[RMDB]
RNA sequence: GGGAACGACUCGAGUAGAGUCGAAAAGGGCUUGACGCAUCGCCCGAAUAGGAUGCAUGUGCUUUUGCACUAAGAUAAAUGUCCGUAUUGUAGGGGACAUAGAACCUACUCAUUAAUGUCCGAAGAGUCUGGGACGAUCAUCAGGCAAGACUAAGAAAGUACCGUAAAUGUUCGCAUUUACGGUACUAAAAGAAACAACAACAACAAC
Reactivity to DMS in 0.01 (KOAc 150mM, MgCl2 10mM, bicine 150mM(pH8.5), 24C), signal-to-noise 2, nucleotides 027 to 156: g020g020g070c000u020u010g030a080c040g010c090a040u000c020g000c000c010c010g030a080a140u000a100g040g000a050u000g010c110a110u000g000u000g000c010u000u000u010u000g050c030a010c030u000a160a150g030a080u000a020a090a080u000g030u000c020c020g000u000a120u000u010g030u010a140g030g010g010g050a090c040a110u030a050g030a120a130c080c000u000a020c010u000c040a140u000u000a050a100u010g000u000c030c030g000a160a160g000a250g000u020c040u000g030g070g010a070c050g020a100u000c020a030u000c000a060g000g050c020a040a050g000a120c110u000a080a110g010a050a110
Reactivity to 2A3 in 0.01 (KOAc 150mM, MgCl2 10mM, bicine 150mM(pH8.5), 24C), signal-to-noise 3, nucleotides 027 to 156: g060g010g000c010u030u030g010a040c030g030c040a040u010c030g000c000c010c000g010a020a060u130a060g010g040a010u070g000c080a080u130g000u010g040c040u130u110u270u300g010c020a020c030u070a050a080g040a120u060a040a140a020u120g010u010c030c030g040u050a060u070u200g020u020a030g000g020g020g030a010c020a010u110a070g070a010a030c000c000u030a020c000u030c040a050u060u160a120a080u100g030u000c020c020g020a110a050g020a020g080u040c040u140g000g010g040a130c040g030a070u070c000a040u020c030a000g040g040c010a060a030g050a130c070u150a040a020g060a100a110